Chemical mapping of a 177-nucleotide RNA with 2A3 and DMS. For 2A3, 773 sequencing reads were counted. In probing experiments dimethyl sulfate is read out at A N1 and C N3, which are open when not base-paired.

RNA sequence: GGGAACGACUCGAGUAGAGUCGAAAAUAUGUAAUUGUAAUUGACGCUGAAUACUGCGUUGAAGAUUAACUUUGUUAAGCAGAUCACUUGUUGUCCAGCGAUCAACAUCAAAGAGCGUCCACGGAUCGUAAGAUGUGGACUUCGGUCCACAUCUUACAAAAGAAACAACAACAACAAC
Reactivity to 2A3 in 0.01 (KOAc 150mM, MgCl2 10mM, bicine 150mM(pH8.5), 24C), signal-to-noise 1, nucleotides 027 to 126: u300a110u130g100u150a010a130u120u050g120u140a110a210u040u060g010a000c040g000c020u010g000a070a030u180a150c020u040g000c000g020u020u060g000a060a080g020a050u150u020a070a130c010u080u050u080g040u180u060a070a000g030c010a000g010a090u050c010a000c070u070u110g020u160u040g000u190c100c020a010g000c020g050a120u080c040a000a020c000a050u100c010a000a080a000g060a010g040c000g020u000c010c010a030c050g120g060a050u090c030
Reactivity to DMS in 0.01 (KOAc 150mM, MgCl2 10mM, bicine 150mM(pH8.5), 24C), signal-to-noise 3, nucleotides 027 to 126: u000a060u000g030u000a090a150u010u010g010u000a110a160u020u000g000a030c020g020c010u000g010a080a050u000a060c080u010g020c100g000u000u000g000a090a110g000a110u000u010a020a030c010u000u000u030g010u000u000a030a030g000c030a080g010a110u000c030a030c030u010u000g010u000u010g010u000c020c020a030g000c010g010a090u000c020a030a020c050a090u000c070a020a040a100g010a150g000c050g010u000c030c020a100c140g010g020a060u020c140